[RMDB]
RNA sequence: GGGAACGACUCGAGUAGAGUCGAAAACGAUCUGUUCGCAGAUCGAGCUACGGAGACGUAGCAAAGCGCGCGAGAGCUCGGACGCGCGCCAUACCGGAAUUAUUACCAUAUCCGCCUGUGCUAGGAUAUGGCCGAGCUCAAAGAUACAGCACAGGGAGUAGACUGAGGAAUUCGUUCCUCAGUCUACAAAAGAAACAACAACAACAAC
Reactivity to 2A3 in 0.01 (KOAc 150mM, MgCl2 10mM, bicine 150mM(pH8.5), 24C), signal-to-noise 1, nucleotides 027 to 156: c020g000a000u000c000u020g020u090u090c290g010c100a000g000a000u000c000g020a000g000c010u010a000c000g000g050a100g000a050c000g010u020a000g000c000a000a110a000g010c000g010c000g000c020g000a010g000a010g010c000u000c000g030g010a080c040g010c000g000c000g010c020c010a040u110a070c010c090g040g050a040a090u130u060a060u120u180a090c000c000a000u000a020u000c000c010g020c000c020u000g000u010g000c020u020a010g010g000a000u000a000u000g000g030c000c000g000a000g000c000u000c010a010a010a000g040a000u130a040c060a000g000c000a000c000a000g020g010g000a040
Annotation:
Conditions: 150 mM KOAc, 10 mM MgCl2 and 150 mM bicine (pH 8.5), 24 C. Structure probing data (2A3) for a 207-nucleotide construct. The 2A3 profile rests on 1,043 reads. Source: RMDB library OK3TST, as collected in RNAgym.